RNA sequence: GGGAACGACUCGAGUAGAGUCGAAAACAGGAGAUCCGCAUAGCUCCAUUCUACUAUGCAUCUAGUCGUCGUUUUCGACGUCUAGUAUAGCCCGACACUGCUGGGGCGAUGAACAGCAGAUUACCACUACUCGUAGCGUGGGUUAUGGCUACGUACACAUAAUAGCUGGAUUCGUCCAGCUAUUAUGAAAAGAAACAACAACAACAAC
Reactivity to DMS in 0.01 (KOAc 150mM, MgCl2 10mM, bicine 150mM(pH8.5), 24C), signal-to-noise 3, nucleotides 027 to 156: c050a150g010g020a160g010a060u000c050c170g000c010a020u000a020g000c000u000c090c280a200u000u000c030u010a010c010u000a010u010g000c000a230u010c020u010a000g000u000c010g020u000c010g040u000u000u000u010c010g030a020c000g000u000c000u000a030g010u010a070u000a130g000c010c010c010g020a110c060a160c030u000g020c000u000g010g000g010g010c020g010a100u000g010a050a100c020a030g000c010a040g020a130u000u010a070c050c010a060c040u000a110c040u010c060g020u010a050g010c050g010u000g020g000g030u000u000a030u000g000g020c010u000a040c020g000u000a120c150a200
Reactivity to 2A3 in 0.01 (KOAc 150mM, MgCl2 10mM, bicine 150mM(pH8.5), 24C), signal-to-noise 6, nucleotides 027 to 156: c040a010g030g000a020g000a040u120c140c080g010c010a010u000a010g010c010u010c040c030a090u150u070c030u090a060c010u020a010u030g000c000a040u030c000u000a000g010u010c000g000u010c010g030u060u100u160u300c040g010a000c000g010u000c000u000a000g020u030a040u110a070g000c000c000c000g060a070c060a020c120u010g000c010u020g000g000g020g020c090g120a130u210g120a050a010c000a010g000c010a000g010a030u050u200a050c030c030a030c040u170a040c030u010c020g010u000a000g000c030g020u070g000g080g020u050u180a110u120g050g010c010u000a000c000g040u060a030c070a000

Structure probing data (DMS and 2A3) for a 207-nucleotide construct. Reactivities are given for positions 27 through 156. For 2A3 the reverse transcriptase was SuperScript II with manganese. Conditions: 150 mM KOAc, 10 mM MgCl2 and 150 mM bicine (pH 8.5), 24 C. The data come from the RNA Mapping Database (RMDB), library OK3TST.